[RMDB]
RNA sequence: GGGAACGACUCGAGUAGAGUCGAAAAGGUAUUUGCCCACGAUGCCAUAGAGGGAGACAUUGGGCUAAUGAAUGCCGUUCUCAAACCACCAUAGAGAGUACUCCCUUAUCAAAAAACGGACAAAGACCUUACUGACGGAUUUCGAUCCGUCAGUAAGAAAAGAAACAACAACAACAAC
Reactivity to DMS in 0.01 (KOAc 150mM, MgCl2 10mM, bicine 150mM(pH8.5), 24C), signal-to-noise 2, nucleotides 027 to 126: g000g000u000a070u000u000u000g020c000c010c010a050c300g020a060u000g010c130c120a210u000a150g020a060g000g020g000a040g000a110c040a180u000u030g010g010g030c030u010a030a090u030g000a020a020u040g000c000c010g000u010u010c000u010c020a050a090a180c150c090a050c140c120a120u020a130g020a100g000a150g000u000a080c020u000c000c000c000u000u030a030u000c080a020a020a110a060a050a040c120g020g010a040c090a010a050a090g000a030c110
Reactivity to 2A3 in 0.01 (KOAc 150mM, MgCl2 10mM, bicine 150mM(pH8.5), 24C), signal-to-noise 2, nucleotides 027 to 126: g030g000u020a050u020u080u050g010c010c010c000a030c120g060a050u110g020c010c030a090u140a120g070a030g020g010g000a000g000a020c040a030u120u140g070g000g040c000u090a110a100u230g150a030a030u070g000c000c000g010u040u030c030u000c000a090a100a050c040c020a010c000c000a090u160a100g100a000g020a000g070u050a070c000u000c030c000c000u000u030a090u070c070a050a040a090a050a000a090c050g050g030a020c030a060a070a020g050a020c000
An RNA of 177 nucleotides, treated with DMS and 2A3 and read out base by base. 2A3 adducts were read by reverse transcription with SuperScript II with manganese. For DMS, 1,167 sequencing reads were counted. Conditions: 150 mM KOAc, 10 mM MgCl2 and 150 mM bicine (pH 8.5), 24 C.